[RMDB]
RNA sequence: GGGAACGACUCGAGUAGAGUCGAAAAACUGCCAAGUUUGGAGAGCACCUCGGGCCGAAGGGUUGAGUAGCACUCAAAGGGAGGAAUCCACUCGGAGUAGAACAGAGAAAUCACCUCCAGAGGACCCAACGACUUCUCUUCGGAGAAGUCAAAAGAAACAACAACAACAAC
Reactivity to 2A3 in 0.01 (KOAc 150mM, MgCl2 10mM, bicine 150mM(pH8.5), 24C), signal-to-noise 8, nucleotides 027 to 129: a000c070u140g050c040c020a100a060g030u070u080u090g060g000a050g000a010g020c030a040c020c030u040c030g020g020g000c020c020g050a060a050g030g000g010u000u020g000a000g030u090a040g030c070a030c060u030c000a060a030a030g030g000g000a020g050g000a020a020u010c030c000a050c010u030c040g030g010a040g020u130a050g030a090a030c090a030g090a000g030a090a050a020u120c060a060c030c000u030c010c000a010g020a020g030g000a030c000c010c000a030a040c070
Reactivity to DMS in 0.01 (KOAc 150mM, MgCl2 10mM, bicine 150mM(pH8.5), 24C), signal-to-noise 9, nucleotides 027 to 129: a060c000u050g050c120c110a050a040g000u010u030u000g040g000a130g010a060g010c110a100c070c000u040c090g050g030g000c060c030g000a120a040g000g040g040u010u000g010a040g000u000a120g040c110a300c060u040c050a080a000a100g040g060g030a000g000g000a060a100u030c040c070a080c060u040c080g030g050a070g030u000a100g010a040a090c160a080g000a060g020a080a080a090u000c080a090c100c000u020c030c030a100g010a030g040g050a090c020c010c020a100a090c150